The record gives the reactivity of an RNA of 207 nucleotides to 2A3 and DMS.
DMS adducts were read by reverse transcription with MarathonRT.
Source: RMDB library OK3TST, as collected in RNAgym.
Conditions: 150 mM KOAc, 10 mM MgCl2 and 150 mM bicine (pH 8.5), 24 C.
2A3 adducts were read by reverse transcription with SuperScript II with manganese.
The 2A3 profile rests on 985 reads.
RNA sequence: GGGAACGACUCGAGUAGAGUCGAAAAUCAUCAUAAAAAAGCUCAAAUUCUGGCCAAUAUAUGUCAUCAUCAAGCCAACGAAGUCCUCAUCGCACAUUUUCUACAGCCUAGCAAUCAAGAAGUCUGACAUCUCGAAAAGACUCAUGGGGAGAGUUUACAUUUAUGCCAGUUUCGACUGGCAUAAAUGAAAAGAAACAACAACAACAAC
Reactivity to 2A3 in 0.01 (KOAc 150mM, MgCl2 10mM, bicine 150mM(pH8.5), 24C), signal-to-noise 2, nucleotides 027 to 156: u070c000a000u000c010a010u220a060a070a060a020a050a010g050c050u050c100a080a050a130u210u020c050u090g010g030c000c030a130a000u090a020u050a060u220g100u040c030a080u000c010a010u070c070a160a010g000c000c030a020a030c070g070a040a010g050u050c010c000u020c020a100u070c020g020c000a050c000a090u030u040u040u050c000u050a060c040a010g000c000c030u040a010g000c060a020a020u090c010a030a090g100a100a010g070u000c020u020g040a020c010a160u130c120u080c080g070a110a090a030a070g010a000c000u000c050a060u040g000g000g000g030a030g030a010g010u020u040u080a040
Reactivity to DMS in 0.01 (KOAc 150mM, MgCl2 10mM, bicine 150mM(pH8.5), 24C), signal-to-noise 2, nucleotides 027 to 156: u000c040a120u000c050a180u030a010a060a090a130a070a100g000c010u010c050a020a050a160u000u000c040u000g040g000c060c050a080a100u010a170u000a060u020g000u010c080a120u010c040a090u010c080a040a080g030c050c020a070a130c060g000a060a130g000u010c010c050u000c040a110u000c050g060c010a100c080a090u000u000u020u060c020u010a080c060a050g060c020c030u010a070g060c050a030a070u000c070a040a100g010a100a030g010u010c000u000g000a060c000a100u010c040u000c000g000a110a120a080a060g020a030c030u010c060a060u010g020g010g040g000a150g010a110g020u000u000u000a160